[RMDB]
RNA sequence: GGGAACGACUCGAGUAGAGUCGAAAACGGACUGGCUCAUCUUCGGAGUGGGGGCGGCGGCGUCUGGUCUCUUAUUUCUUCCUUCUGAGAAGAGGAGACAGCUUGCCGCUCGCCCCCAGACCCGAGAAAAUCGUUGGCUUCGGCCAACGAAAAAGAAACAACAACAACAAC
Reactivity to 2A3 in 0.01 (KOAc 150mM, MgCl2 10mM, bicine 150mM(pH8.5), 24C), signal-to-noise 2, nucleotides 027 to 129: c010g000g050a080c020u090g060g000c050u000c090a060u000c010u190u150c030g000g000a090g030u060g000g000g000g000g000c040g020g000c000g000g000c000g000u050c000u050g090g000u020c000u000c000u040u150a280u220u080u020c010u000u050c000c040u030u200c060u130g100a170g000a150a000g020a010g000g000a000g000a030c000a020g020c030u000u000g000c000c000g000c020u040c020g020c000c000c000c000c000a000g000a000c000c080c000g000a000g060a010a120a000a040
Reactivity to DMS in 0.01 (KOAc 150mM, MgCl2 10mM, bicine 150mM(pH8.5), 24C), signal-to-noise 1, nucleotides 027 to 129: c060g010g010a110c020u030g030g020c020u000c060a070u010c090u000u000c080g000g030a140g000u010g010g000g000g010g040c000g000g000c030g020g030c000g020u020c020u000g000g020u010c000u000c040u010u000a020u010u040u000c010u000u000c040c030u030u120c110u060g010a150g020a000a000g020a020g040g010a020g020a080c020a030g000c110u000u050g040c040c020g010c000u030c040g030c090c000c010c000c000a000g010a030c110c010c010g000a040g020a020a020a020a030